An RNA of 177 nucleotides, treated with DMS and 2A3 and read out base by base. For 2A3, 2,835 sequencing reads were counted. Source: RMDB library TTRDES, as collected in RNAgym. DMS adducts were read by reverse transcription with MarathonRT.
[RMDB]
RNA sequence: GGGAACGACUCGAGUAGAGUCGAAAAGAUAUGGAAGUGUCCAGAACGAGGAUCUUGUGUGUCGGAAACGACACCAAGGGAGUUCUGACACUUCCUAAGUCAAAAGCUAUUCGUUCGCGAAUAGCAAGACAGAUCUUGAGUUCGCUCAAGAUCUGUCAAAAGAAACAACAACAACAAC
Reactivity to DMS in 0.01 (KOAc 150mM, MgCl2 10mM, bicine 150mM(pH8.5), 24C), signal-to-noise 1, nucleotides 027 to 126: g000a090u010a300u000g000g000a000a000g010u000g010u010c120c200a030g010a000a010c000g010a040g000g000a040u010c010u010u000g010u000g050u010g020u000c030g010g000a080a120a130c000g010a040c000a000c000c010a000a010g010g000g000a010g030u000u000c000u000g020a020c010a000c000u000u000c000c000u000a000a070g000u000c020a090a050a190a190g020c000u020a010u000u000c000g020u010u040c250g020c010g020a020a020u000a010g010c020a060a050
Reactivity to 2A3 in 0.01 (KOAc 150mM, MgCl2 10mM, bicine 150mM(pH8.5), 24C), signal-to-noise 2, nucleotides 027 to 126: g010a020u090a050u170g020g000a010a000g010u020g050u140c300c200a000g020a010a010c040g060a300g140g040a020u000c000u030u090g060u000g000u000g000u250c010g020g040a020a050a020c000g020a010c000a000c000c000a000a000g010g020g010a080g000u010u000c010u000g010a000c000a010c010u010u010c000c000u000a040a000g010u000c020a060a090a020a130g020c000u000a010u000u010c020g050u040u230c300g000c010g170a000a030u000a010g000c010a010a000